[RMDB]
RNA sequence: GGGAACGACUCGAGUAGAGUCGAAAACCUCUUCUCUCCCCCUCCGGGUUCUCCUCGCAUCGGACUGGCUCAUUCUCGGAGAGGGCGGACGGUCCUGAGAACUCUUAUCUUCCUGCUUAGAAGAGGAAACGAGUACCGUUCGCGGUACUCAAAAGAAACAACAACAACAAC
Reactivity to DMS in 0.01 (KOAc 150mM, MgCl2 10mM, bicine 150mM(pH8.5), 24C), signal-to-noise 7, nucleotides 027 to 129: c040c010u010c000u020u010c020u010c060u040c050c040c040c040c020u030c050c050g020g010g030u040u010c020u010c010c060u050c120g000c130a040u000c110g030g020a090c040u000g020g050c110u020c050a050u040u010c000u020c050g030g040a090g000a090g050g010g020c100g040g000a020c040g000g000u030c020c030u060g030a090g010a100a090c000u020c030u110u000a080u020c130u000u000c010c040u000g000c100u050u060a050g030a050a050g000a020g040g080a090a120a070c170
Reactivity to 2A3 in 0.01 (KOAc 150mM, MgCl2 10mM, bicine 150mM(pH8.5), 24C), signal-to-noise 8, nucleotides 027 to 129: c000c000u000c010u020u000c030u010c030u050c000c000c000c000c000u010c020c010g010g010g000u010u010c010u010c010c010u110c090g030c050a120u090c060g050g030a070c030u020g060g000c020u000c020a130u220u030c070u010c060g060g010a100g020a040g060g010g000c020g020g020a020c000g020g000u020c000c030u040g000a020g010a020a010c000u000c020u070u120a130u090c030u050u030c030c030u050g090c060u110u140a010g000a030a000g000a020g020g000a010a020a020c080
An RNA of 170 nucleotides, treated with DMS and 2A3 and read out base by base. The DMS profile rests on 23,013 reads. For 2A3, 27,183 sequencing reads were counted. For DMS the reverse transcriptase was MarathonRT. The RNA was probed in 150 mM KOAc, 10 mM MgCl2 and 150 mM bicine (pH 8.5) at 24 C.